[RMDB]
RNA sequence: GGGAACGACUCGAGUAGAGUCGAAAACAUUCAGAUUGAGUGGAAGGAGGGAAGAUCAGAGAAGCUAUGCCAGAUUGACAGGCUUGGGCAUGUCACAAGCUGGUUAAGAAACCACUCAUCUUUCCAGAUAGCUAGUCGGUUUCGACCGACUAGCUAUAAAAGAAACAACAACAACAAC
Reactivity to DMS in 0.01 (KOAc 150mM, MgCl2 10mM, bicine 150mM(pH8.5), 24C), signal-to-noise 2, nucleotides 027 to 126: c070a110u000u010c060a120g010a090u000u010g000a030g040u000g000g010a090a120g040g000a240g020g000g010a060a050g000a050u000c120a070g010a130g000a130a100g000c070u000a080u000g010c000c010a050g010a080u000u010g010a020c050a010g020g000c040u000u010g020g070g020c000a010u000g000u000c000a040c300a050a100g010c000u000g000g030u000u000a080a080g000a060a040a080c110c130a100c010u030c010a110u000c010u000u010u000c010c020a200g000
Reactivity to 2A3 in 0.01 (KOAc 150mM, MgCl2 10mM, bicine 150mM(pH8.5), 24C), signal-to-noise 2, nucleotides 027 to 126: c040a050u130u090c050a040g270a300u180u160g020a030g010u010g030g030a140a070g100g040a080g040g010g050a060a000g030a090u060c090a010g070a060g010a140a000g040c050u100a020u100g030c000c000a020g020a020u000u020g030a010c020a040g000g070c000u040u050g210g080g010c030a030u040g000u010c000a000c020a210a020g100c030u010g020g030u000u030a000a030g040a050a040a000c030c000a050c000u010c000a020u000c010u020u000u050c000c000a070g030
This 177-nucleotide RNA was probed chemically with DMS and 2A3. Source: RMDB library OK2TST, as collected in RNAgym. Conditions: 150 mM KOAc, 10 mM MgCl2 and 150 mM bicine (pH 8.5), 24 C.